[RMDB]
RNA sequence: GGGAACGACUCGAGUAGAGUCGAAAAUCGCUGGGCUGUCGGGAGUAAGAGGUAUGGCGACUCCUGAAGCGCGCACGGGAGCAAUGCCAUACUACCCACCUUACUUCUCUAGCGUGCAGCCUGUGCUGAAGCGCGCACGGCAACCGAAAGGUGCGGGGAUAUACACCGAGUUCGCUCGGUGUAUAUCAAAAGAAACAACAACAACAAC
Reactivity to 2A3 in 0.01 (KOAc 150mM, MgCl2 10mM, bicine 150mM(pH8.5), 24C), signal-to-noise 4, nucleotides 027 to 156: u080c010g000c010u020g000g010g010c000u000g010u070c080g020g000g030a010g000u000a010a000g000a000g000g010u010a010u010g040g010c180g280a120c010u010c010c000u040g040a150a060g010c000g000c000g000c000a010c020g000g000g010a000g010c090a130a050u070g000c000c000a000u000a010c010u030a040c070c060c020a070c000c000u010u000a000c000u050u040c060u000c060u070a090g100c100g270u300g010c020a000g000c000c000u010g020u030g000c010u040g040a130a040g000c000g000c010g000c010a010c000g010g000c010a030a030c000c010g040a100a030a020g000g000u020g010c010g000g030g010
Reactivity to DMS in 0.01 (KOAc 150mM, MgCl2 10mM, bicine 150mM(pH8.5), 24C), signal-to-noise 2, nucleotides 027 to 156: u000c000g010c000u000g020g000g000c020u010g040u000c030g000g000g010a040g050u000a010a030g000a170g020g000u000a040u020g000g060c000g010a110c000u000c020c010u030g000a030a060g000c020g040c010g050c020a300c040g000g000g000a050g030c030a060a080u010g010c020c010a070u000a040c000u000a020c020c010c110a300c090c010u000u000a030c040u000u000c010u000c020u010a050g010c140g000u010g020c030a080g000c000c000u000g000u000g020c000u000g010a040a050g000c030g020c010g050c000a300c060g000g010c040a090a020c010c040g010a050a110a130g050g000u000g010c000g010g000g010

Chemical mapping of a 207-nucleotide RNA with 2A3 and DMS. For 2A3 the reverse transcriptase was SuperScript II with manganese. Conditions: 150 mM KOAc, 10 mM MgCl2 and 150 mM bicine (pH 8.5), 24 C. For DMS the reverse transcriptase was MarathonRT.